Notes:
Chemical mapping of a 207-nucleotide RNA with 2A3 and DMS. For 2A3, 12,391 sequencing reads were counted. Source: RMDB library OK3TST, as collected in RNAgym. The reactions ran in a buffer of 150 mM KOAc, 10 mM MgCl2 and 150 mM bicine (pH 8.5), at 24 C. For DMS, 4,046 sequencing reads were counted. For DMS the reverse transcriptase was MarathonRT. 2A3 adducts were read by reverse transcription with SuperScript II with manganese.
RNA sequence: GGGAACGACUCGAGUAGAGUCGAAAAGUCACGAGGAGACUCGUGACAGCAUGCUUCGGCAUGCAAGGGUCGGCAUGGCAUCUCCACCUCCUCGCGGUCCGACCUGGGCAUCCGAAGGAGGACGCACGUCCACUCGGAUGCUUAACGGAGAGCCAAACAUUAGUCAUGAGUUCGCUCAUGACUAAUGAAAAGAAACAACAACAACAAC
Reactivity to 2A3 in 0.01 (KOAc 150mM, MgCl2 10mM, bicine 150mM(pH8.5), 24C), signal-to-noise 6, nucleotides 027 to 156: g000u000c000a000c000g000a000g030g040a070g030a070c000u000c000g000u000g010a000c000a000g000c000a000u000g000c000u060u050c220g120g020c000a000u010g000c030a030a090g010g000g000u000c000g000g030c150a210u120g030g000c010a070u020c010u000c010c010a010c000c000u030c010c020u100c040g040c090g000g000u000c000c010g000a000c000c000u010g010g000g000c000a000u000c000c010g050a100a050g050g060a190g010g010a030c040g090c140a110c240g000u000c000c000a010c010u000c000g000g000a010u000g000c000u000u000a000a000c000g000g000a000g000a000g000c000c000a000a020a000
Reactivity to DMS in 0.01 (KOAc 150mM, MgCl2 10mM, bicine 150mM(pH8.5), 24C), signal-to-noise 2, nucleotides 027 to 156: g040u000c030a020c000g030a030g000g020a300g020a230c030u000c010g050u000g020a020c040a080g000c020a030u000g000c000u000u020c270g060g050c000a020u010g020c030a060a050g010g010g030u000c040g020g000c100a200u000g040g030c020a150u000c010u000c000c020a080c020c020u000c030c020u000c050g010c140g000g000u000c000c020g010a040c060c020u000g010g000g000c000a070u020c000c020g010a130a090g010g010a180g060g010a030c020g030c150a150c220g010u010c010c000a030c000u000c020g020g010a030u010g000c000u010u000a020a050c080g030g000a040g030a230g000c010c000a090a170a300